[RMDB]
RNA sequence: GGGAACGACUCGAGUAGAGUCGAAAAGGGACUGGCCCGAUGAACCCCGGCAACCUAACUUUAUUUAAGCGUAAAGUGAAGGUGCUAAUUCCAGCAAAAUGGUGUAUUCCGUUUUGGUAGAUAAGAGAAGCGUGACAUGAGUUCGCUCAUGUCACAAGUUUUAACCGCAGUUCGCUGCGGUUAAAACAAAAGAAACAACAACAACAAC
Reactivity to 2A3 in 0.01 (KOAc 150mM, MgCl2 10mM, bicine 150mM(pH8.5), 24C), signal-to-noise 2, nucleotides 027 to 156: g010g000g000a020c010u030g020g080c010c000c040g000a060u090g010a040a020c010c000c010c010g030g000c010a060a050c000c000u010a000a000c000u000u030u020a050u070u200u110a200a030g140c030g010u000a010a000a000g010u030g030a070a030g000g000u010g000c010u010a030a070u110u020c020c000a000g040c040a080a040a000a020u030g000g040u110g040u150a090u100u130c000c020g010u010u010u020u020g080g010u100a080g030a260u180a300a060g060a050g090a170a070g140c050g030u000g000a000c000a000u010g000a000g050u100u140c200g030c060u000c000a000u000g000u000c000a000c010a000a000
Reactivity to DMS in 0.01 (KOAc 150mM, MgCl2 10mM, bicine 150mM(pH8.5), 24C), signal-to-noise 1, nucleotides 027 to 156: g010g060g000a120c060u000g050g060c040c020c000g000a110u000g040a080a090c020c000c010c040g020g000c020a020a040c000c020u000a190a000c000u000u020u000a050u000u000u000a160a230g060c270g020u000a030a010a030g030u010g020a100a060g000g010u000g000c000u000a030a210u000u000c000c040a020g010c020a010a040a010a050u010g020g000u000g040u000a090u010u000c000c020g020u000u000u020u000g000g000u020a070g000a060u010a110a040g010a160g000a090a140g030c120g000u000g020a010c000a030u000g010a010g040u010u000c300g000c000u000c000a010u000g000u020c000a000c010a000a040